[RMDB]
RNA sequence: GGGAACGACUCGAGUAGAGUCGAAAAGGGGUCUGCACGAUGGUAGUACAAGACAUGCUCGUAUGGAGCUGAAGCCUCCACGGCUCCCUACGAGCAACAGCUUGUACGAGAGUAGUGCAGACGGAGGCACCCAAACAACGUUCUUCGGAACGUUGAAUCCUUCAAGAUAGUUCGCUAUCUUGAAGGAAAAAGAAACAACAACAACAAC
Reactivity to DMS in 0.01 (KOAc 150mM, MgCl2 10mM, bicine 150mM(pH8.5), 24C), signal-to-noise 3, nucleotides 027 to 156: g000g010g040g030u000c000u000g000c000a030c010g000a190u020g010g040u020a290g010u000a050c010a020a030g000a030c020a220u010g050c000u000c010g050u000a010u000g010g010a070g010c010u000g000a150a140g010c020c010u000c000c010a300c030g020g000c000u010c000c020c060u000a020c000g000a020g000c010a020a030c060a190g020c000u010u000g010u000a010c030g000a300g010a090g020u000a300g020u000g020c000a030g000a040c020g020g000a050g010g020c020a150c010c030c010a070a110a210c000a010a020c010g000u010u000c000u000u010c300g040g000a020a000c010g000u000u000g030a080a130
Reactivity to 2A3 in 0.01 (KOAc 150mM, MgCl2 10mM, bicine 150mM(pH8.5), 24C), signal-to-noise 3, nucleotides 027 to 156: g200g010g030g000u000c000u000g000c000a000c010g050a050u000g010g030u010a010g000u000a000c000a010a000g100a080c210a300u300g020c000u000c000g000u000a010u040g000g000a000g000c000u010g010a060a020g010c010c010u000c000c000a010c000g000g000c000u000c000c010c000u000a000c000g010a000g000c000a000a000c010a000g010c000u000u000g000u000a000c010g000a010g000a000g000u010a000g000u000g000c000a000g000a000c010g000g000a000g000g020c010a040c000c010c000a040a080a010c010a000a000c010g000u000u000c010u060u090c270g140g000a000a000c000g010u010u000g000a000a040
This 207-nucleotide RNA was probed chemically with DMS and 2A3. For DMS the reverse transcriptase was MarathonRT. The DMS profile rests on 6,619 reads. Reactivities are given for positions 27 through 156.